[RMDB]
RNA sequence: GGGAACGACUCGAGUAGAGUCGAAAAUCUUCUCCCUUCGGGGAGAAGAAAACAUAAACAUGAGAAAAUGCAGCUGUGGCACAGCAGCCAUAAAAGUAUAAAAAAGUCACAUCUUCGGAUGUGACAACUUUACAAUGGUGUUCGCACCAUUGUAAAGAAAAGAAACAACAACAACAAC
Reactivity to DMS in 0.01 (KOAc 150mM, MgCl2 10mM, bicine 150mM(pH8.5), 24C), signal-to-noise 2, nucleotides 027 to 126: u000c000u000u000c000u000c010c010c000u000u000c200g060g000g000g000a000g000a030a000g010a010a070a080a100c070a030u010a080a170a080c060a060u010g020a130g000a100a050a090a120u000g000c050a020g020c150u010g030u010g010g000c050a130c140a080g010c010a140g000c000c060a050u010a010a110a120a130g040u000a050u010a030a020a010a030a130a140g010u000c000a000c010a000u000c000u000u010c120g040g000a000u000g010u000g000a010c000a010a020
Reactivity to 2A3 in 0.01 (KOAc 150mM, MgCl2 10mM, bicine 150mM(pH8.5), 24C), signal-to-noise 2, nucleotides 027 to 126: u000c000u010u030c000u030c000c000c000u000u050c210g100g010g020g020a010g000a000a000g000a000a010a010a010c010a020u250a050a130a010c030a050u160g040a050g090a160a170a070a010u080g000c070a060g000c020u010g000u050g080g000c100a020c010a100g090c030a000g000c020c010a010u090a030a070a020a010g060u080a090u240a170a160a040a020a020a010g000u000c000a010c000a000u020c030u020u080c200g080g010a010u000g000u000g020a000c000a000a000

An RNA of 177 nucleotides, treated with DMS and 2A3 and read out base by base. Reactivities are given for positions 27 through 126. For DMS the reverse transcriptase was MarathonRT. The RNA was probed in 150 mM KOAc, 10 mM MgCl2 and 150 mM bicine (pH 8.5) at 24 C.